The data come from the RNA Mapping Database (RMDB), library OK1LIB. Structure probing data (2A3 and DMS) for a 177-nucleotide construct. The RNA was probed in 150 mM KOAc, 10 mM MgCl2 and 150 mM bicine (pH 8.5) at 24 C. Reactivities are given for positions 27 through 126. For 2A3 the reverse transcriptase was SuperScript II with manganese. For 2A3, 10,420 sequencing reads were counted. For DMS the reverse transcriptase was MarathonRT.

RNA sequence: GGGAACGACUCGAGUAGAGUCGAAAAGAUUACGUGUCCGUGAGGAAUCGAAACGACGCACGAGAUUCCAAGGUCUCUGUAGUACGUCGUCUCGUGACGUCUCUCUAGUCACAUUCGACAUACCAAACGAUUCUACUAGGUUCGCCUAGUAGAAUCGAAAAGAAACAACAACAACAAC
Reactivity to 2A3 in 0.01 (KOAc 150mM, MgCl2 10mM, bicine 150mM(pH8.5), 24C), signal-to-noise 5, nucleotides 027 to 126: g030a040u080u090a050c060g000u010g010u000c040c030g030u030g040a020g040g060a040a130u060c020g020a010a030a010c040g030a010c010g000c020a020c030g010a020g000a010u090u030c060c030a060a070g100g010u000c020u000c020u070g040u030a040g040u040a040c020g010u010c000g020u000c010u000c020g010u010g030a020c020g030u000c010u000c000u000c020u030a030g000u000c000a000c000a000u020u010c000g010a000c010a020u070a020c010c000a000a030a040
Reactivity to DMS in 0.01 (KOAc 150mM, MgCl2 10mM, bicine 150mM(pH8.5), 24C), signal-to-noise 3, nucleotides 027 to 126: g000a120u000u020a070c060g000u010g010u000c020c080g000u030g000a150g010g000a110a110u040c040g000a080a030a070c030g000a090c090g000c080a040c080g000a300g000a010u000u010c130c080a120a090g000g000u020c000u010c010u030g010u000a110g050u000a050c010g000u000c030g020u000c030u000c100g000u000g000a100c050g010u010c040u020c050u000c070u040a120g000u000c030a020c040a000u010u010c020g000a000c020a050u000a140c000c020a030a140a210